[RMDB]
RNA sequence: GGGAACGACUCGAGUAGAGUCGAAAAUGUCAUGGAUAUAAGAAAAGGUAUUCGCCCUCUGCUGGUCAAGGCUCAGCAAUGCCUAUAGAGGGAAUAAAUUACCAUUUCUUUGCUGUAGGUGGCGAACCACCGUCGAUUAUUUCGAUAAUCGACGGUGAAAAGAAACAACAACAACAAC
Reactivity to DMS in 0.01 (KOAc 150mM, MgCl2 10mM, bicine 150mM(pH8.5), 24C), signal-to-noise 4, nucleotides 027 to 126: u040g000u000c030a010u010g020g000a090u030a070u020a010a040g010a010a010a030a060g010g020u010a020u010u010c300g000c000c010c010u000c000u020g010c120u000g010g000u020c100a110a080g000g010c030u030c140a060g000c060a070a050u020g000c040c000u020a100u010a010g020a040g000g000g010a060a080u050a040a060a020u000u020a000c030c020a080u000u000u000c000u000u000u000g010c030u010g010u020a070g000g010u000g000g020c050g020a120a120c150
Reactivity to 2A3 in 0.01 (KOAc 150mM, MgCl2 10mM, bicine 150mM(pH8.5), 24C), signal-to-noise 6, nucleotides 027 to 126: u160g030u040c030a050u080g110g040a040u100a030u050a250a030g030a010a020a000a040g010g010u030a030u020u100c090g050c010c000c010u010c010u020g040c030u070g010g110u140c090a110a090g050g000c040u020c130a060g030c030a050a100u210g020c000c000u050a040u070a080g010a010g000g010g010a000a020u080a020a040a010u100u050a010c000c000a010u010u010u000c010u060u030u090g070c040u030g060u110a080g000g100u020g020g010c020g030a020a020c010
The record gives the reactivity of an RNA of 177 nucleotides to DMS and 2A3. DMS adducts were read by reverse transcription with MarathonRT. Source: RMDB library OK1LIB, as collected in RNAgym. High DMS reactivity at an A or C suggests that its Watson-Crick edge is free. 2A3 adducts were read by reverse transcription with SuperScript II with manganese. The reactions ran in a buffer of 150 mM KOAc, 10 mM MgCl2 and 150 mM bicine (pH 8.5), at 24 C. Values cover nucleotides 27 to 126.